[RMDB]
RNA sequence: GGGAACGACUCGAGUAGAGUCGAAAAUGUGGGACGGAGUUCGUGUCUAGAGCGACUCUGCAUUCUUCUCCAUGUCAUCAGAUAAACAGAACCCAAACAAACUGAGUAGAGGUGACCGGAUCUGUUCAGCUUCUACCUGUUUCGACAGGUAGAAGCUAAAAGAAACAACAACAACAAC
Reactivity to DMS in 0.01 (KOAc 150mM, MgCl2 10mM, bicine 150mM(pH8.5), 24C), signal-to-noise 2, nucleotides 027 to 126: u010g040u000g010g000g000a150c040g000g030a060g010u020u010c020g030u000g000u000c170u020a170g020a170g010c070g030a040c020u000c000u000g010c060a100u000u000c080u010u000c030u000c020c030a100u000g000u000c040a100u000c020a090g020a150u000a040a020a100c050a030g000a070a140c030c050c010a030a080a130c130a080a070a070c020u000g000a110g020u000a130g000a110g010g020u000g010a030c040c160g010g010a090u000c050u000g020u000u000c100